[RMDB]
RNA sequence: GGGAACGACUCGAGUAGAGUCGAAAACAGAACUGGAUGGGCCGUGUGCUUAACCAGGACAAGAUCUCCUUCUCUCCAACGUUGUUGCCAACUCAUGAUUCUCCUAACCUGUGAUUGGAGAGACGUGCUACCAUAUAGGUGUUCGCACCUAUAUGAACAAACUUUAUCACUUCGGUGAUAAAGUUUGAAAAGAAACAACAACAACAAC
Reactivity to DMS in 0.01 (KOAc 150mM, MgCl2 10mM, bicine 150mM(pH8.5), 24C), signal-to-noise 2, nucleotides 027 to 156: c040a070g020a100a100c030u010g030g010a210u000g020g000g060c000c040g020u000g060u000g010c010u000u010a050a130c040c000a020g010g020a090c060a140a070g000a090u010c020u000c010c030u000u000c040u000c020u000c010c000a050a150c130g020u010u000g010u000u000g000c010c020a040a180c070u010c020a070u000g010a140u000u000c030u020c010c030u020a080a060c060c050u020g050u000g010a180u010u010g000g000a120g000a010g010a040c030g000u000g040c050u030a140c070c000a010u000a030u000a010g020g030u010g040u010u020c300g020c020a000c030c010u010a000u000a010u000g040a080a230
Reactivity to 2A3 in 0.01 (KOAc 150mM, MgCl2 10mM, bicine 150mM(pH8.5), 24C), signal-to-noise 2, nucleotides 027 to 156: c060a040g020a080a060c010u020g010g030a070u040g060g040g020c080c110g280u200g110u230g050c000u020u000a040a040c010c000a010g020g010a010c010a020a050g070a140u040c000u010c000c000u050u070c050u010c000u000c030c010a090a050c200g010u000u010g000u030u040g050c060c030a120a060c080u090c040a050u050g080a180u130u050c030u040c040c030u080a070a150c000c070u120g060u150g150a150u090u100g020g000a000g000a000g020a010c000g000u010g030c030u070a150c050c000a000u010a010u010a040g000g000u020g020u090u070c220g030c080a030c030c000u000a000u000a000u000g000a020a000
Structure probing data (DMS and 2A3) for a 207-nucleotide construct. For DMS the reverse transcriptase was MarathonRT. The reactions ran in a buffer of 150 mM KOAc, 10 mM MgCl2 and 150 mM bicine (pH 8.5), at 24 C. Source: RMDB library M2RFPK, as collected in RNAgym.